[RMDB]
RNA sequence: GGGAACGACUCGAGUAGAGUCGAAAAGCGUAACGGCUGGGUGUAACCCAACUCUAGGUGUGCUGAUUAGCGGGCUUGACUCCGUAACAAAUAGGCACUGGUGGUCAAAAGCAUCCCACCUACUCACAAAGCUCCAAAUUCUUCGGAAUUUGGAGAACUCUACCGUAGAGUUCGCUCUACGGUAGAGAAAAGAAACAACAACAACAAC
Reactivity to 2A3 in 0.01 (KOAc 150mM, MgCl2 10mM, bicine 150mM(pH8.5), 24C), signal-to-noise 2, nucleotides 027 to 156: g000c010g000u040a000a070c020g060g000c040u030g000g000g030u070g040u090a130a130c000c010c020a050a060c060u130c030u080a060g060g060u050g000u040g120c030u010g040a120u060u050a060g000c000g000g010g030c060u120u120g020a090c060u020c050c010g010u030a040a000c020a030a070a040u130a060g020g000c000a020c040u010g000g030u050g030g010u050c050a000a000a060a150g010c000a050u070c030c010c000a010c010c020u060a130c020u040c040a050c070a070a130a010g070c010u000c000c010a010a000a000u010u000c010u020u040c120g060g000a000a000u000u000u010g000g000a000g000a000a000
Reactivity to DMS in 0.01 (KOAc 150mM, MgCl2 10mM, bicine 150mM(pH8.5), 24C), signal-to-noise 1, nucleotides 027 to 156: g010c040g000u000a100a180c110g010g020c020u000g030g060g050u000g000u010a080a300c180c010c020a040a010c000u000c160u020a160g040g030u000g010u000g010c010u020g010a140u000u000a120g080c060g020g040g100c030u000u000g030a120c070u010c030c010g030u010a050a200c100a040a050a120u000a170g000g010c040a010c020u000g010g000u000g010g020u000c000a010a160a090a130g000c040a100u010c040c000c010a060c100c030u000a020c020u020c080a090c040a190a130a200g080c020u020c010c000a000a030a020u000u000c000u010u000c300g000g010a040a020u000u000u000g010g000a010g000a000a010
Chemical mapping of a 207-nucleotide RNA with 2A3 and DMS. The DMS profile rests on 1,161 reads. The RNA was probed in 150 mM KOAc, 10 mM MgCl2 and 150 mM bicine (pH 8.5) at 24 C. For DMS the reverse transcriptase was MarathonRT. 2A3 adducts were read by reverse transcription with SuperScript II with manganese.